RNA sequence: GGGAACGACUCGAGUAGAGUCGAAAACGUCGUGAACUAGCGACAAUGCCGUAGAUCCAUCGUUAUCUAACCGAAACAUCGUGACUAGUCGUAGAAUAGAACCAGGAGAGGACGCUGGCAAACAAAGACGGCGUCUCAGAUUCGUCUGAGGCGCCGUAAAAGAAACAACAACAACAAC
Reactivity to DMS in 0.01 (KOAc 150mM, MgCl2 10mM, bicine 150mM(pH8.5), 24C), signal-to-noise 2, nucleotides 027 to 126: c150g010u030c030g000u010g000a030a030c060u010a140g000c060g010a010c040a180a030u030g000c020c010g010u000a160g010a170u000c040c010a090u000c030g000u000u040a080u000c020u000a050a100c080c040g010a080a050a040c120a090u000c060g050u000g000a050c030u000a110g010u000c060g000u000a050g020a090a070u000a080g000a060a080c100c040a020g000g010a120g010a080g000g000a000c040g020c000u020g000g020c080a010a030a100c060a030a050a100g010
Reactivity to 2A3 in 0.01 (KOAc 150mM, MgCl2 10mM, bicine 150mM(pH8.5), 24C), signal-to-noise 2, nucleotides 027 to 126: c040g010u010c000g050u060g060a130a070c050u030a020g010c010g030a020c010a000a010u190g050c020c000g060u060a080g030a150u040c060c020a060u020c050g070u080u060a070u020c020u010a030a070c030c000g070a050a070a000c020a080u050c070g090u030g010a070c020u030a050g020u030c060g030u030a020g030a080a040u070a080g010a020a020c020c010a050g000g070a100g020a010g010g000a000c010g000c010u010g000g000c000a000a000a090c010a020a100a010g080